[RMDB]
RNA sequence: GGGAACGACUCGAGUAGAGUCGAAAACACAUGCCAUCAUAUCGGUUAAGAACUCUUAACUCUGAUGGCUUUCGAGUUAUGUGGUGCAUUGUAGCUCUCCCUUCAAUUCAACGUACCGUUCCGUCAAAAUAGUUUUUUACUUCGGUAAAAAACUAUUAAAAGAAACAACAACAACAAC
Reactivity to DMS in 0.01 (KOAc 150mM, MgCl2 10mM, bicine 150mM(pH8.5), 24C), signal-to-noise 4, nucleotides 027 to 126: c120a100c160a060u010g000c000c010a010u000c000a050u010a080u010c260g000g000u000u000a000a010g000a250a230c300u010c010u000u000a000a010c000u010c090u000g010a010u000g000g000c010u000u000u000c060g000a050g010u000u000a030u010g020u000g010g020u000g000c020a050u010u000g000u000a070g010c030u000c030u000c010c010c000u010u000c110a050a100u010u000c060a010a060c040g020u000a040c020c030g000u000u010c010c010g000u000c070a060a060
Reactivity to 2A3 in 0.01 (KOAc 150mM, MgCl2 10mM, bicine 150mM(pH8.5), 24C), signal-to-noise 2, nucleotides 027 to 126: c040a000c010a020u110g020c040c010a000u000c000a040u090a080u300c050g020g010u020u010a030a040g110a300a250c080u050c010u300u020a010a000c000u030c030u100g010a000u000g000g000c000u010u020u030c020g010a000g000u020u060a040u060g090u090g060g000u010g000c020a030u040u060g050u040a010g020c010u000c000u030c050c000c020u010u080c070a080a100u100u040c020a040a030c040g030u000a030c040c000g020u020u000c020c020g060u080c010a040a020
An RNA of 177 nucleotides, treated with DMS and 2A3 and read out base by base. The reactions ran in a buffer of 150 mM KOAc, 10 mM MgCl2 and 150 mM bicine (pH 8.5), at 24 C. DMS adducts were read by reverse transcription with MarathonRT.